[RMDB]
RNA sequence: GGGAACGACUCGAGUAGAGUCGAAAAACAAUAUGAAACUGAUUGUAAAACAUGGGUGUUUGAACAAUAUGAAAUCAGUGCACCCUGAAAAAGAACAGAAUAACAGUGAUUUUCAGGGAACGAGGGAGGAUAAAGGUCUGACUGCCUGUGGGGUCAACACGUGACCACUAUUCGUAGUGGUCACGUGAAAAGAAACAACAACAACAAC
Reactivity to 2A3 in 0.01 (KOAc 150mM, MgCl2 10mM, bicine 150mM(pH8.5), 24C), signal-to-noise 2, nucleotides 027 to 156: a000c040a010a040u140a060u160g030a190a040a000c020u010g020a100u110u060g040u130a060a050a020a000c040a150u070g000g060g030u080g080u160u170u160g100a100a080c080a140a130u160a060u240g100a060a060a080u110c000a030g000u060g010c010a040c020c000c000u050g020a000a040a000a000a000g100a020a010c010a010g260a300a050u110a110a000c060a080g050u000g070a060u000u020u050u030c000a000g000g080g000a050a060c020g000a070g000g000g000a030g000g000a010u040a030a070a000g010g000u010c040u010g090a060c010u040g000c000c000u050g040u040g020g010g000g050u040c030a080a000
Chemical mapping of a 207-nucleotide RNA with 2A3. The reactions ran in a buffer of 150 mM KOAc, 10 mM MgCl2 and 150 mM bicine (pH 8.5), at 24 C. For 2A3, 563 sequencing reads were counted. 2A3 adducts were read by reverse transcription with SuperScript II with manganese.